[RMDB]
RNA sequence: GGGAACGACUCGAGUAGAGUCGAAAAGAUAUGGAGCAAGCUUUUGACGCUCUACCAAUCGGAAACGAUUGAUGAGCGAUAAGCUUCCUCCUAAGUCAAAAGAAUAUAUGCUUCGGCAUAUAUUCAACUAUGUAUAGAUGUUCGCAUCUAUACAUAGAAAAGAAACAACAACAACAAC
Reactivity to DMS in 0.01 (KOAc 150mM, MgCl2 10mM, bicine 150mM(pH8.5), 24C), signal-to-noise 8, nucleotides 027 to 126: g000a030u010a300u010g000g000a000g030c210a010a010g000c000u000u000u010u010g030a200c090g020c000u000c010u010a110c110c000a010a010u000c000g010g010a090a080a150c000g000a010u000u000g000a030u000g000a010g020c000g010a070u000a020a010g010c000u000u000c300c010u000c000c000u000a030a100g000u000c030a090a080a100a140g000a020a010u000a010u000a000u000g010c000u000u020c240g030g010c000a000u000a000u000a000u000u000c000a080a180
Reactivity to 2A3 in 0.01 (KOAc 150mM, MgCl2 10mM, bicine 150mM(pH8.5), 24C), signal-to-noise 6, nucleotides 027 to 126: g020a020u060a020u160g000g000a000g000c020a010a010g000c010u140u080u150u290g230a170c100g000c000u000c000u020a080c020c020a010a000u010c000g010g010a060a040a030c010g000a010u000u010g010a010u020g000a000g010c030g080a070u030a040a000g000c000u000u000c000c000u000c000c000u020a140a020g050u030c040a030a050a030a190g010a010a000u010a000u000a000u020g010c020u040u110c300g160g000c000a000u000a000u000a000u010u000c000a000a010